[RMDB]
RNA sequence: GGGAACGACUCGAGUAGAGUCGAAAAGGCAAGGGCUCGAAGAGGGAUCCCCGGGGAAACAUACACGAGCGAGGCGGAGAUCGAGCGCCAGUUCGUGCGCGGCGACCUGUUGUUGCUUCGGCUUCUUCUUGUUCGCGUCCUGCGUGGAGCGGCUCCUCCAUGUAAUGCAGUUCGCUGCAUUACAUGGAAAAGAAACAACAACAACAAC
Reactivity to 2A3 in 0.01 (KOAc 150mM, MgCl2 10mM, bicine 150mM(pH8.5), 24C), signal-to-noise 1, nucleotides 027 to 156: g050g010c010a030a040g070g020g000c040u030c040g160a130a090g040a050g020g030g040a080u030c030c040c020c020g000g000g000g000a080a120a050c060a070u260a060c030a010c020g000a000g000c050g020a230g000g030c030g000g040a120g060a060u150c030g060a050g130c000g000c010c000a010g000u080u080c020g020u070g060c060g000c000g160g000c020g000a030c020c020u020g010u020u000g050u010u030g030c010u060u030c060g020g030c010u000u010c000u080u000c030u100u240g110u220u140c050g030c030g110u170c050c000u090g060c070g100u140g000g020a000g000c030g000g010c020u060c000c000u000